The record gives the reactivity of an RNA of 177 nucleotides to 2A3. Conditions: 150 mM KOAc, 10 mM MgCl2 and 150 mM bicine (pH 8.5), 24 C.
RNA sequence: GGGAACGACUCGAGUAGAGUCGAAAAGCAAAGGUUUACGGAUAAACAACUAAUAAUUAAACCUUUUGUGUGCGAAACGUGGUUGUUUAACGUACUCUUUAAUCGCUCCGAAGCGAACACACUGUUUUCCACUUUGCAUAUUCGUAUGCAAAGUGGAAAAAGAAACAACAACAACAAC
Reactivity to 2A3 in 0.01 (KOAc 150mM, MgCl2 10mM, bicine 150mM(pH8.5), 24C), signal-to-noise 2, nucleotides 027 to 126: g020c020a040a060a030g000g000u020u050u000a000c000g050g100a210u080a080a030a010c020a020a000c040u030a020a080u110a090a040u150u230a120a050a050c010c000u000u040u140u180g140u020g000u030g030c140g060a060a010a030c170g020u110g000g000u000u000g000u010u010u020a010a000c010g000u000a000c020u020c000u110u000u090a080a050u020c040g000c010u000c010c180g170a090a010g040c030g090a120a000c060a000c000a040c090u040g070u160u020u000